[RMDB]
RNA sequence: GGGAACGACUCGAGUAGAGUCGAAAAGGAGCUCGAGUUGUUCUUAGCUCAACUAAGGGCAACUGUAUGUUCUUAAGCUGUUUAAGGGCAUAUUGUAGUGUGUAGUUGAGCUACACAUUAUAAAUAGGUUAUAAACAGCUUAUGGCCUGUUCGAGCAUCGAUUUAGUAUGUUCGCAUACUAAAUCGAAAAAGAAACAACAACAACAAC
Reactivity to DMS in 0.01 (KOAc 150mM, MgCl2 10mM, bicine 150mM(pH8.5), 24C), signal-to-noise 1, nucleotides 027 to 156: g030g020a260g000c000u010c020g000a070g020u000u000g000u000u000c010u000u000a010g020c040u020c180a090a070c030u000a040a090g010g000g020c020a020a090c030u000g040u000a070u010g010u010u000c000u000u000a010a040g030c030u020g000u010u000u000a030a100g020g020g050c000a020u000a010u000u020g060u000a020g060u020g020u000g000u000a010g010u010u010g000a270g040c000u010a030c010a010c000a000u000u010a020u000a030a070a050u000a020g030g030u000u010a300u000a020a020a040c010a020g020c040u000u000a000u000g010g030c040c030u000g030u010u020c020g000a050g040c030a300
Reactivity to 2A3 in 0.01 (KOAc 150mM, MgCl2 10mM, bicine 150mM(pH8.5), 24C), signal-to-noise 3, nucleotides 027 to 156: g110g020a080g000c000u010c010g000a000g010u000u000g000u000u000c000u010u010a010g000c010u010c090a040a100c040u130a050a140g030g040g000c030a040a050c050u080g060u150a140u160g040u060u030c010u010u010a010a000g000c000u000g020u030u010u010a060a060g140g030g000c010a010u000a000u030u010g020u010a020g010u000g000u010g000u000a010g030u040u250g070a020g010c000u000a000c000a000c000a000u030u060a020u060a060a140a060u020a010g000g030u040u010a030u010a050a020a000c010a000g000c000u000u000a010u010g010g000c000c000u070g040u060u050c090g010a000g010c010a060

This 207-nucleotide RNA was probed chemically with DMS and 2A3. For 2A3 the reverse transcriptase was SuperScript II with manganese.